[RMDB]
RNA sequence: GGGAACGACUCGAGUAGAGUCGAAAAAGACGCGCAAAUUUAUUUGCAAAAAUCAUGGGAUGCUACAAUGUGGAGAGGAUAUUCCAAUGCCUAACGUCCGUUCCCGUCUAUUGCAAGACACCAGUUACUGAAUGUGUUCUGUUGGAAAGAGAACAUAGCUGUAAUAACCCUUCGGGGUUAUUACAGCAAAAGAAACAACAACAACAAC
Reactivity to 2A3 in 0.01 (KOAc 150mM, MgCl2 10mM, bicine 150mM(pH8.5), 24C), signal-to-noise 1, nucleotides 027 to 156: a000g070a000c050g000c020g010c090a020a050a010u110u170u090a300u140u090u130g010c020a070a000a100a050a070u080c030a060u070g000g000g010a010u020g050c000u030a060c100a080a300u170g080u090g150g000a100g010a010g060g070a040u030a080u150u000c050c000a080a010u150g000c010c000u060a030a030c020g010u050c020c000g010u000u050c010c010c000g010u020c020u060a080u040u280g070c020a000a020g020a030c000a030c020c010a030g020u030u090a080c080u150g070a090a100u110g030u010g000u010u050c050u020g070u140u040g020g040a060a040a000g010a000g000a020a010c030a000u130a050